[RMDB]
RNA sequence: GGGAACGACUCGAGUAGAGUCGAAAAGCUGCACCUCCAGUGGUGUCGAUAGACAGCUGGAUGGAUAGGUAUGCAGUGCCAUCUCCUACGCUGUAAAGCACGCCUGGUGCGAUGGUCGCGUUGGCCGGUUCGUCUGGACUUUCGAGUCCAGACGAACAAAAGAAACAACAACAACAAC
Reactivity to DMS in 0.01 (KOAc 150mM, MgCl2 10mM, bicine 150mM(pH8.5), 24C), signal-to-noise 1, nucleotides 027 to 126: g000c020u000g000c040a200c020c040u000c010c030a000g050u010g030g010u000g020u000c000g020a180u040a050g100a050c010a210g010c000u000g000g010a010u020g000g000a070u000a100g040g020u000a150u000g010c020a070g010u000g000c080c050a090u000c010u020c010c000u000a110c140g010c020u000g000u040a120a120a140g010c010a110c110g010c100c040u000g010g020u010g000c060g000a050u010g010g030u000c170g100c150g040u000u000g020g040c050c090g060
Reactivity to 2A3 in 0.01 (KOAc 150mM, MgCl2 10mM, bicine 150mM(pH8.5), 24C), signal-to-noise 1, nucleotides 027 to 126: g000c000u000g040c000a000c000c010u000c030c000a030g050u120g170g300u050g050u060c010g030a140u070a150g010a000c000a000g000c000u000g080g030a170u180g000g020a050u160a060g110g000u130a040u120g020c010a020g010u020g050c010c000a170u100c050u090c060c010u000a010c030g000c010u030g080u280a010a190a000g050c010a010c040g080c010c050u050g020g020u040g010c000g020a050u070g030g060u040c010g010c040g130u140u100g010g030c020c000g060

Overview
The record gives the reactivity of an RNA of 177 nucleotides to DMS and 2A3. Source: RMDB library OK2TST, as collected in RNAgym. Reactivities are given for positions 27 through 126. For DMS, 725 sequencing reads were counted. Conditions: 150 mM KOAc, 10 mM MgCl2 and 150 mM bicine (pH 8.5), 24 C. The 2A3 profile rests on 729 reads. DMS adducts were read by reverse transcription with MarathonRT.